[RMDB]
Structure probing data (DMS and 2A3) for a 207-nucleotide construct. The data come from the RNA Mapping Database (RMDB), library M2RFPK. Values cover nucleotides 27 to 156. The DMS profile rests on 2,770 reads. The RNA was probed in 150 mM KOAc, 10 mM MgCl2 and 150 mM bicine (pH 8.5) at 24 C. DMS (dimethyl sulfate) methylates the pairing face of unpaired adenines and cytosines.

RNA sequence: GGGAACGACUCGAGUAGAGUCGAAAAGAAAUUACGUUUCCUUUACACUUCUCAAACCGGGAUCAAGAGAAGCAAAGCAUCCCGCAUAUCCACGAUGGAGGGUGUCGUGGAGUAUACUGUACCAAAAAGAGCGAACACGGCUUCGGCCGUGUUCGAAGUUAAUUAGUAUCUUCGGAUACUAAUUAACAAAAGAAACAACAACAACAAC
Reactivity to DMS in 0.01 (KOAc 150mM, MgCl2 10mM, bicine 150mM(pH8.5), 24C), signal-to-noise 2, nucleotides 027 to 156: g040a100a110a040u010u010a030c080g000u000u000u000c000c000u020u000u000a150c060a090c010u000u000c000u020c050a030a060a160c090c030g030g060g020a120u010c030a130a300g000a050g000a060a040g020c020a040a100a090g020c050a080u000c010c000c000g070c100a140u000a100u000c010c000a040c030g020a060u020g040g000a090g020g000g020u000g000u010c020g050u000g010g000a020g010u000a090u000a090c080u000g010u000a120c060c070a030a050a100a060a130g000a140g000c040g000a060a030c010a010c000g000g060c010u000u010c300g060g070c000c000g030u000g000u000u000c010g050a000a050
Reactivity to 2A3 in 0.01 (KOAc 150mM, MgCl2 10mM, bicine 150mM(pH8.5), 24C), signal-to-noise 5, nucleotides 027 to 156: g030a010a060a020u190u090a050c060g020u020u030u030c000c000u030u050u080a060c080a040c020u060u030c030u020c060a140a090a040c040c040g010g020g010a010u040c050a290a080g040a040g020a080a030g090c090a030a020a020g030c020a020u010c010c020c000g000c020a080u110a050u100c000c000a000c010g010a010u040g110g070a070g060g040g030u090g000u000c000g000u000g010g000a000g000u000a000u010a020c110u080g070u140a100c020c060a040a070a060a050a000g100a050g100c020g000a000a000c010a000c000g000g010c010u030u040c100g070g000c000c000g000u000g000u000u000c000g000a000a000
For 2A3 the reverse transcriptase was SuperScript II with manganese.